Structure probing data (DMS and 2A3) for a 207-nucleotide construct.
RNA sequence: GGGAACGACUCGAGUAGAGUCGAAAACUUACGGUGCUACAGUCGUUUAUUCUGUAAUACGAUCAAUUGUGUACUUAUUUCUAGGUCACUCAACCUUUGGGGUGUGUUUGGGUCUGGUAGCGGUUAUAGCAACCCCAAUUCCACCGCUUUUUAUUACCACGACUAUAAAGUUCGCUUUAUAGUCGUGAAAAGAAACAACAACAACAAC
Reactivity to DMS in 0.01 (KOAc 150mM, MgCl2 10mM, bicine 150mM(pH8.5), 24C), signal-to-noise 2, nucleotides 027 to 156: c040u010u000a110c060g020g030u000g030c020u000a060c080a090g020u000c040g040u010u000u000a080u020u000c100u000g030u000a040a120u010a080c040g030a060u000c040a060a140u000u000g010u010g020u000a040c030u000u000a070u000u010u000c100u010a080g020g000u000c030a070c070u000c060a050a110c040c030u010u000u000g020g020g010g020u000g030u010g030u010u000u010g010g030g000u000c040u010g010g000u000a060g020c020g000g000u000u000a080u010a110g000c030a060a070c040c000c020c010a040a160u000u000c050c000a070c020c020g000c040u000u000u000u000u010a090u030u010a150c040
Reactivity to 2A3 in 0.01 (KOAc 150mM, MgCl2 10mM, bicine 150mM(pH8.5), 24C), signal-to-noise 5, nucleotides 027 to 156: c030u100u100a020c040g000g010u030g010c030u050a030c020a040g010u020c060g050u070u100u100a160u170u130c060u100g090u130a050a080u080a130c030g030a050u120c090a140a120u130u080g010u020g010u090a030c010u050u070a080u090u120u040c110u070a020g020g020u040c040a020c070u080c030a050a070c010c030u040u070u110g040g010g010g000u030g000u010g010u030u050u040g030g000g020u010c050u070g090g010u030a040g010c010g000g090u110u140a180u110a090g020c020a020a100c000c000c000c020a010a020u110u010c040c020a030c010c010g030c000u140u090u050u060u060a100u110u040a010c040
Annotation: For 2A3 the reverse transcriptase was SuperScript II with manganese. For DMS, 5,871 sequencing reads were counted. The reactions ran in a buffer of 150 mM KOAc, 10 mM MgCl2 and 150 mM bicine (pH 8.5), at 24 C.